[RMDB]
RNA sequence: GGGAACGACUCGAGUAGAGUCGAAAAAGCUUCUUUACGUUGCUUAUACCAGCCAAGCUCUUCUGCCGUGAAAGUCGUCUUGGCAGGGGCCGCGGAAGUGUAGGCCCAAGGAUCUAAACCAUCCUCACCGGAAAAUCAGCUUCGGCUGAUUUUCCGGAAAAGAAACAACAACAACAAC
Reactivity to 2A3 in 0.01 (KOAc 150mM, MgCl2 10mM, bicine 150mM(pH8.5), 24C), signal-to-noise 1, nucleotides 027 to 126: a010g000c100u110u120c010u060u300u100a010c050g010u000u070g000c000u060u000a030u020a080c000c000a000g000c000c000a000a000g000c140u060c010u160u000c100u170g020c090c000g070u110g130a040a040a040g130u160c130g090u030c030u080u140g000g000c000a030g000g000g030g000c070c000g060c120g080g200a100a120g000u170g030u240a060g040g040c000c000c000a000a050g060g000a000u090c000u100a050a020a120c040c150a000u000c000c020u090c000a130
Structure probing data (2A3) for a 177-nucleotide construct. Values are in units of 0.01, from 0 to 300, in steps of 10. The RNA was probed in 150 mM KOAc, 10 mM MgCl2 and 150 mM bicine (pH 8.5) at 24 C. Source: RMDB library OK1LIB, as collected in RNAgym. For 2A3, 302 sequencing reads were counted.